[RMDB]
RNA sequence: GGGAACGACUCGAGUAGAGUCGAAAAGGGAAUGGUGGUUUACCCCGUUAUCAAAUGAUUACCGACCAAUAAUUGGCGAAACUCGUUUCGCGUUGGCUGCCUAAUUCAAGGAAUUAGCGUGCCUUUAAAGACAUCAAGAAGUUCGCUUCUUGAUGAACUUACCACGAACGUUCGCGUUCGUGGUAAGAAAAGAAACAACAACAACAAC
Reactivity to 2A3 in 0.01 (KOAc 150mM, MgCl2 10mM, bicine 150mM(pH8.5), 24C), signal-to-noise 3, nucleotides 027 to 156: g040g010g010a140a120u160g030g010u010g020g010u010u030u170a100c070c010c000c000g160u120u050a140u120c090a080a100a050u190g020a050u080u050a030c000c040g090a060c030c040a000a060u190a180a050u090u090g100g010c000g050a040a040a060c050u060c090g060u000u010u030c030g000c000g060u020u060g010g020c020u050g000c000c010u040a030a000u050u030c090a220a110g140g040a080a090u000u010a020g020c050g070u040g000c000c010u040u080u030a030a030a000g020a000c010a020u000c010a010a000g000a000a000g000u040u200c220g010c150u000u000c000u000u000g000a000u000g010a000a010
Reactivity to DMS in 0.01 (KOAc 150mM, MgCl2 10mM, bicine 150mM(pH8.5), 24C), signal-to-noise 1, nucleotides 027 to 156: g000g010g000a080a010u000g020g020u000g000g000u000u000u000a080c020c000c010c010g080u010u090a090u030c110a130a070a110u000g010a080u010u000a050c050c000g040a090c030c040a070a140u000a060a140u000u010g050g030c030g020a100a060a040c070u000c160g020u000u000u020c020g030c140g010u000u000g010g000c000u000g000c090c000u000a010a020u000u000c020a120a120g040g000a050a040u000u000a010g020c050g000u000g000c000c000u000u000u000a060a080a120g010a120c010a000u000c000a000a040g000a030a030g020u000u010c300g000c020u000u000c000u000u010g010a010u000g010a040a060
An RNA of 207 nucleotides, treated with 2A3 and DMS and read out base by base. For 2A3, 1,309 sequencing reads were counted. For DMS, 2,622 sequencing reads were counted. The reactions ran in a buffer of 150 mM KOAc, 10 mM MgCl2 and 150 mM bicine (pH 8.5), at 24 C. 2A3 adducts were read by reverse transcription with SuperScript II with manganese.